[RMDB]
RNA sequence: GGGAACGACUCGAGUAGAGUCGAAAAAAUAGAAAGCUAACAUAAUAAGAAUAGGAAUAUCAAUAAAUCAACGUUUUUCAACUUAUGAAAUGCUUGAUUUUCAUUAAAAAUGAUAUAUUUCCCUACCAUAUGUACCUAGCUUCGGCUAGGUACAUAUAAAAGAAACAACAACAACAAC
Reactivity to 2A3 in 0.01 (KOAc 150mM, MgCl2 10mM, bicine 150mM(pH8.5), 24C), signal-to-noise 2, nucleotides 027 to 126: a000a000u230a050g060a010a120a000g030c080u070a090a030c010a180u300a140a070u190a160a070g060a190a090u120a100g120g000a090a030u020a000u060c050a030a020u000a160a050a000u010c000a000a030c070g030u000u000u000u010u090c060a120a050c060u080u100a070u180g000a000a000a030u080g000c020u000u010g010a020u060u000u010u000c080a110u080u300a050a050a050a050a020u100g000a000u020a000u000a010u040u030u000c010c010c000u000a030c030c040
Reactivity to DMS in 0.01 (KOAc 150mM, MgCl2 10mM, bicine 150mM(pH8.5), 24C), signal-to-noise 1, nucleotides 027 to 126: a000a020u000a000g000a180a040a000g000c030u000a100a110c110a050u020a120a040u050a090a120g000a070a030u000a140g000g000a150a030u030a040u000c060a060a110u020a020a000a060u000c010a040a020c130g000u030u000u000u030u000c020a150a110c240u130u070a030u000g000a000a070a020u020g000c010u000u000g000a030u010u000u040u000c120a120u020u040a010a100a050a030a040u050g000a030u040a050u000a060u010u000u000c010c000c010u000a070c050c130
Conditions: 150 mM KOAc, 10 mM MgCl2 and 150 mM bicine (pH 8.5), 24 C. Structure probing data (2A3 and DMS) for a 177-nucleotide construct. Values cover nucleotides 27 to 126. For 2A3 the reverse transcriptase was SuperScript II with manganese. For DMS the reverse transcriptase was MarathonRT. The 2A3 profile rests on 881 reads.